[RMDB]
RNA sequence: GGGAACGACUCGAGUAGAGUCGAAAAAAUUUGAGCGUCGCACACACACACACUAAGUCUGCUGCUGACAGAGCCUAAACCGCUCUGUCAGUGUGCGAGAUAUCGUUCUUAAUGUGAGCAGAAGAAAUCUUAACACCUCUUUCGAGAGGUGUUAAGAAAAAGAAACAACAACAACAAC
Reactivity to DMS in 0.01 (KOAc 150mM, MgCl2 10mM, bicine 150mM(pH8.5), 24C), signal-to-noise 3, nucleotides 027 to 126: a030a110u000u000u010g010a090g000c080g000u000c040g040c050a050c020a080c040a020c080a080c100a080c050a000c060u000a080a120g020u000c030u000g000c000u000g010c020u000g000a000c000a000g000a010g010c010c000u010a050a120a110c300c300g000c000u000c000u000g010u000c020a010g010u000g000u000g020c020g010a030g010a050u000a080u000c050g010u000u000c010u000u000a050a050u000g010u000g000a050g000c040a070g000a080a090g000a070a070a070
Reactivity to 2A3 in 0.01 (KOAc 150mM, MgCl2 10mM, bicine 150mM(pH8.5), 24C), signal-to-noise 1, nucleotides 027 to 126: a000a010u140u060u060g010a010g030c020g040u020c050g070c000a020c000a000c000a000c010a000c000a010c000a050c040u080a020a090g070u000c010u020g000c000u000g040c000u000g000a000c000a000g000a000g020c010c010u010a040a030a020c020c000g000c000u010c000u000g000u000c000a010g000u000g020u040g000c030g000a010g000a030u160a050u110c070g030u080u040c000u090u120a160a150u240g060u030g050a030g000c050a020g040a050a000g060a020a160a020